[RMDB]
RNA sequence: GGGAACGACUCGAGUAGAGUCGAAAACGCAGAGGGUUCUGAUAACAAAGAACCUAGAUAGCCGCAUCAGUAUUAUAGGAUGUAGUCGGUGAGCCGGAAUGCCUGCAUCGUAAGCCUAUAAGUAAAUUUAAGUGUAAUCACUUCGGUGAUUACACAACAUACCUUAUUCGUUCGCGAAUAAGGUAUGAAAAGAAACAACAACAACAAC
Reactivity to DMS in 0.01 (KOAc 150mM, MgCl2 10mM, bicine 150mM(pH8.5), 24C), signal-to-noise 4, nucleotides 027 to 156: c070g020c030a080g010a260g010g010g000u000u030c010u010g030a200u010a130a240c300a160a260a090g010a010a030c010c010u000a030g010a180u000a110g020c060c070g000c050a090u010c050a130g000u000a110u000u000a050u000a050g020g010a050u010g020u000a100g040u000c030g020g020u000g010a070g030c020c000g020g010a150a180u000g010c040c000u010g020c030a030u000c020g030u000a060a090g000c020c000u000a010u000a050a040g010u000a050a100a160u000u000u000a060a130g010u000g010u000a010a010u000c000a010c000u000u000c300g000g020u000g010a010u000u000a010c000a000c000a040a070
Reactivity to 2A3 in 0.01 (KOAc 150mM, MgCl2 10mM, bicine 150mM(pH8.5), 24C), signal-to-noise 7, nucleotides 027 to 156: c080g000c040a030g050a080g070g030g000u010u000c010u010g090a120u110a230a050c030a020a120a010g010a000a010c010c000u010a020g020a080u100a010g050c050c050g070c060a080u070c060a010g170u160a050u160u040a030u070a040g030g000a030u030g060u080a040g080u090c030g020g000u040g010a020g030c030c040g070g080a100a030u100g030c010c010u020g030c020a010u000c030g050u050a060a010g000c000c010u050a050u030a120a040g060u100a050a120a210u180u220u120a160a020g000u000g000u000a000a000u000c000a000c000u020u050c150g030g000u000g000a000u000u000a000c000a000c000a000a000
An RNA of 207 nucleotides, treated with DMS and 2A3 and read out base by base. The reactions ran in a buffer of 150 mM KOAc, 10 mM MgCl2 and 150 mM bicine (pH 8.5), at 24 C. DMS adducts were read by reverse transcription with MarathonRT. The DMS profile rests on 7,344 reads.